[RMDB]
RNA sequence: GGGAACGACUCGAGUAGAGUCGAAAAUUAAGGCACAUAAUUGUGCUUUGAGCUUUGAUUAGAUGUAAUCAAAUACAAUGACAAGAACACUGCACUUUCUUGUCGGACAUCGCUUACAGUGGACCCACAGUACACGGUGGCUGGAAACUGUGCUAUCUACCGUACCUAAUUUCGAUUAGGUACGGUAAAAAGAAACAACAACAACAAC
Reactivity to DMS in 0.01 (KOAc 150mM, MgCl2 10mM, bicine 150mM(pH8.5), 24C), signal-to-noise 4, nucleotides 027 to 156: u000u000a040a030g010g020c010a010c000a090u000a130a200u010u020g040u000g010c000u010u010u000g000a050g030c180u000u000u000g010a050u000u010a070g010a220u000g020u000a070a030u000c010a020a030a100u010a070c080a130a150u010g000a020c010a020a010g010a050a030c110a230c090u010g000c110a150c110u010u000u000c010u000u010g020u010c020g020g010a070c040a060u010c030g020c070u000u000a040c000a090g020u000g020g000a110c010c020c030a100c060a110g000u000a020c060a040c030g030g060u000g000g000c050u000g000g000a160a030a050c050u000g000u000g010c040u010a110u000c030
Reactivity to 2A3 in 0.01 (KOAc 150mM, MgCl2 10mM, bicine 150mM(pH8.5), 24C), signal-to-noise 7, nucleotides 027 to 156: u100u040a020a010g020g110c030a000c010a020u210a200a150u300u110g000u010g000c020u020u000u020g010a010g030c030u030u040u060g040a050u050u080a100g120a250u150g120u160a030a010u020c040a040a010a020u240a090c110a070a100u180g000a000c000a000a000g010a020a000c080a040c160u140g020c040a040c060u020u020u010c010u000u000g010u000c000g000g010a020c010a030u050c030g010c060u070u080a020c020a030g010u020g020g060a050c000c040c020a020c010a010g060u060a040c050a010c120g050g000u020g030g000c050u080g060g010a020a070a030c060u030g000u010g030c010u040a060u060c030